[RMDB]
RNA sequence: GGGAACGACUCGAGUAGAGUCGAAAAGGUGGAGAUGCCAUGCCGACCCGAAGAGGAAAGGAAGGACACAGACGCGAACCGUGAGUGGAACCCUCGAUCCUUUAUUGGGGGGUACACUCGAGGAGUGAUACCGGAAGCUUCGGCUUCCGGAAAAGAAACAACAACAACAAC
Reactivity to DMS in 0.01 (KOAc 150mM, MgCl2 10mM, bicine 150mM(pH8.5), 24C), signal-to-noise 6, nucleotides 027 to 129: g050g000u010g020g020a110g040a090u010g060c120c030a060u070g000c070c040g010a030c030c060c080g080a080a040g020a080g000g100a050a050a010g040g020a010a020g020g030a070c210a010c120a050g040a100c110g030c090g070a090a110c050c030g010u050g020a030g030u010g020g010a120a120c000c020c040u040c020g030a050u030c260c200u060u030u120a030u020u030g010g020g010g020g000g020u030a080c060a020c010u030c030g000a070g040g020a090g020u040g030a130u060a100
Reactivity to 2A3 in 0.01 (KOAc 150mM, MgCl2 10mM, bicine 150mM(pH8.5), 24C), signal-to-noise 3, nucleotides 027 to 129: g040g000u090g020g060a080g020a080u090g060c030c020a040u100g070c020c000g010a030c030c000c000g000a020a010g010a040g040g020a040a000a000g020g030a000a000g000g010a030c010a010c000a100g070a010c020g000c000g060a040a000c010c000g030u080g000a000g000u020g010g000a110a030c000c000c030u000c000g010a040u140c020c120u150u150u150a020u050u080g000g000g000g010g010g010u080a020c000a000c000u000c000g000a030g000g000a010g000u050g020a030u110a090